[RMDB]
Chemical mapping of a 177-nucleotide RNA with 2A3. For 2A3, 519 sequencing reads were counted. The reactions ran in a buffer of 150 mM KOAc, 10 mM MgCl2 and 150 mM bicine (pH 8.5), at 24 C. The data come from the RNA Mapping Database (RMDB), library OK1LIB. Values cover nucleotides 27 to 126.
RNA sequence: GGGAACGACUCGAGUAGAGUCGAAAACUCGUGUUAAUCUCACACUAGAGCAAUUGCAAUCUCUCACUCCUUUACCAACAUCUGCUAACCUAGUCCACAGAUUGGAUGAUGGCACUACUCAAUUAAAAACACCAAGGCGUUUCGACGCCUUGGUGUUAAAAGAAACAACAACAACAAC
Reactivity to 2A3 in 0.01 (KOAc 150mM, MgCl2 10mM, bicine 150mM(pH8.5), 24C), signal-to-noise 2, nucleotides 027 to 126: c000u000c000g080u030g040u040u030a190a140u150c020u020c020a080c000a120c110u120a020g040a000g160c070a190a260u070u060g020c000a000a000u030c060u000c000u000c070a090c010u130c000c070u000u100u090a110c000c000a020a100c010a040u110c020u120g060c040u020a090a170c030c010u020a020g050u000c000c000a050c000a060g120a140u100u100g060g040a050u150g010a010u090g000g010c060a010c020u150a000c020u070c020a000a000u000u300a130a030a050